[RMDB]
An RNA of 177 nucleotides, treated with 2A3 and DMS and read out base by base. For 2A3 the reverse transcriptase was SuperScript II with manganese. Source: RMDB library TTRDEL, as collected in RNAgym.
RNA sequence: GGGAACGACUCGAGUAGAGUCGAAAAGAUAUGGAGCUGUGGAGAUCCACUAUUAUUUCGGAAACGAAAUAACGAAUGAAGAUCGAUGAAACAGCUCCUAAGUCAAAGUAACGGUUCGCCGUUACAAUCUUAUUCUUGUCUUCGGACAAGAAUAAGAAAAAGAAACAACAACAACAAC
Reactivity to 2A3 in 0.01 (KOAc 150mM, MgCl2 10mM, bicine 150mM(pH8.5), 24C), signal-to-noise 4, nucleotides 027 to 126: g010a000u100a050u140g000g000a010g020c000u010g000u010g030g050a030g000a020u000c020c020a020c070u030a030u070u010a000u000u010u010c030g010g050a040a050a070c010g010a000a010a020u010a010a010c070g140a230a300u180g040a080a070g030a030u050c040g140a200u030g010a040a040a000c010a010g000c000u010c000c000u010a030a000g020u000c020a040a040a100g000u000a020a000c010g000g070u050u070c270g050c080c020g010u000u000a000c010a010a010
Reactivity to DMS in 0.01 (KOAc 150mM, MgCl2 10mM, bicine 150mM(pH8.5), 24C), signal-to-noise 5, nucleotides 027 to 126: g000a050u000a300u000g000g000a000g010c000u020g000u000g010g010a070g020a010u000c000c020a100c110u010a230u000u000a000u000u000u000c000g000g000a120a100a230c010g000a010a000a010u000a000a020c070g000a090a080u000g010a120a090g000a010u000c000g010a080u010g000a170a110a010c000a010g000c000u000c000c000u010a010a100g000u000c030a100a090a140g000u000a000a020c000g000g000u000u010c300g020c000c000g010u000u000a010c000a100a130